Structure probing data (DMS and 2A3) for a 177-nucleotide construct.
For 2A3, 1,009 sequencing reads were counted.
DMS (dimethyl sulfate) methylates the pairing face of unpaired adenines and cytosines.
For DMS, 1,209 sequencing reads were counted.
It was measured as part of the RMDB library OK1LIB.
[RMDB]
RNA sequence: GGGAACGACUCGAGUAGAGUCGAAAACACGCCUGACAAGAAGGCAAUGUCAGUACCAGAGCGUAUUGGCGCAUAGAAAUCGGCCACCGACGCGGUACGCGUAAAGCGCGGAUCGAUCACAAUCAGCUAUAUGGUCCUGCUUCGGCAGGACCAUAUAAAAAGAAACAACAACAACAAC
Reactivity to DMS in 0.01 (KOAc 150mM, MgCl2 10mM, bicine 150mM(pH8.5), 24C), signal-to-noise 1, nucleotides 027 to 126: c130a300c040g000c010c020u040g040a300c230a300a130g000a170a000g030g000c020a130a180u000g020u030c000a000g000u020a000c020c020a250g000a060g020c030g220u040a030u000u020g020g010c000g060c110a120u000a030g110a000a060a030u000c110g000g100c070c000a060c000c070g040a100c050g030c060g040g000u030a110c000g030c010g000u020a020a060a180g000c020g000c000g000g000a000u000c000g000a090u030c050a040c090a070a030u000c110a270g000c030
Reactivity to 2A3 in 0.01 (KOAc 150mM, MgCl2 10mM, bicine 150mM(pH8.5), 24C), signal-to-noise 2, nucleotides 027 to 126: c060a000c060g040c000c010u050g070a120c110a170a030g200a060a010g070g120c000a020a000u150g020u030c000a000g000u040a020c020c050a060g030a030g180c140g080u020a100u050u070g030g000c080g000c050a090u100a080g130a020a060a030u040c040g050g000c000c000a000c010c050g010a000c030g000c000g010g010u030a060c060g000c000g060u070a080a060a150g040c000g000c000g000g000a000u050c010g040a000u140c030a000c060a020a100u170c040a010g000c020
About this RNA
Values are in units of 0.01, from 0 to 300, in steps of 10.